Structure probing data (DMS and 2A3) for a 177-nucleotide construct. For 2A3 the reverse transcriptase was SuperScript II with manganese.

RNA sequence: GGGAACGACUCGAGUAGAGUCGAAAAGAUAUGGAUCAUCAGUAGGCUAUAAUCGUUUCUAGGGUAUAUCAGCUCGGAAACGAGCUGAGUAUACCCUAGAAACGGUAGCCUAAGUUGAUCCUAAGUCCAAUAUGGUCAUCUUCGGAUGACCAUAUUGAAAAGAAACAACAACAACAAC
Reactivity to DMS in 0.01 (KOAc 150mM, MgCl2 10mM, bicine 150mM(pH8.5), 24C), signal-to-noise 3, nucleotides 027 to 126: g010a090u010a300u010g000g000a020u000c000a010u000c020a180g030u000a020g000g000c010u000a090u010a300a140u010c010g030u000u000u000c000u000a010g000g000g020u000a000u000a030u000c000a010g020c000u000c010g000g000a120a080a260c010g010a030g020c000u000g000a040g030u000a000u000a000c010c010c000u000a000g000a000a000a010c000g020g010u000a000g010c000c000u000a020a020g000u010u000g010a000u000c010c010u000a020a110g010u010c030
Reactivity to 2A3 in 0.01 (KOAc 150mM, MgCl2 10mM, bicine 150mM(pH8.5), 24C), signal-to-noise 2, nucleotides 027 to 126: g040a030u210a060u270g010g000a010u000c010a000u010c040a050g300u030a010g050g000c010u050a060u130a300a300u240c010g000u000u000u030c010u000a000g000g020g000u000a020u010a020u050c000a000g000c010u020c020g030g020a050a120a070c020g000a000g000c000u000g000a000g000u000a000u010a000c000c000c020u000a000g000a000a000a000c010g000g000u000a000g000c000c000u000a000a000g010u000u010g010a000u000c010c010u010a170a050g060u050c020
It was measured as part of the RMDB library TTRINS.